[RMDB]
RNA sequence: GGGAACGACUCGAGUAGAGUCGAAAAAGUGUAGCAACUAGGUGGGCCUGGCGUAUCGGAGAUGAAUGGGCGUCCUGGCAGAGCUGCACAGGUAAUCCUGUCCGCAGUGCAGGGUCUACUCUGUGAGGCCGCGGUCGUCCUUCGGGAUGGUUGCGGCAAAAGAAACAACAACAACAAC
Reactivity to DMS in 0.01 (KOAc 150mM, MgCl2 10mM, bicine 150mM(pH8.5), 24C), signal-to-noise 9, nucleotides 027 to 126: a060g010u010g020u010a050g020c050a110a050c050u000a050g010g020u020g010g010g010c030c030u010g010g010c070g010u020a090u020c060g010g000a100g010a120u030g010a070a070u020g000g010g000c060g000u010c010c010u010g000g010c090a080g000a130g010c040u010g010c000a020c000a010g000g000u010a060a050u010c010c000u000g000u010c040c070g010c160a110g010u010g010c020a040g000g000g010u010c050u010a030c010u020c030u000g000u000g000a120g000
Reactivity to 2A3 in 0.01 (KOAc 150mM, MgCl2 10mM, bicine 150mM(pH8.5), 24C), signal-to-noise 9, nucleotides 027 to 126: a000g060u060g010u010a010g010c020a020a030c020u030a020g050g010u040g030g040g010c000c010u010g020g000c020g020u060a100u120c040g040g020a090g020a090u160g050a090a060u050g010g020g000c010g060u040c000c010u010g020g000c020a010g010a010g030c020u010g000c000a010c000a010g000g000u040a030a040u060c000c000u000g040u030c030c070g070c100a040g020u040g070c010a010g000g000g010u000c020u010a030c020u030c010u030g020u010g020a030g070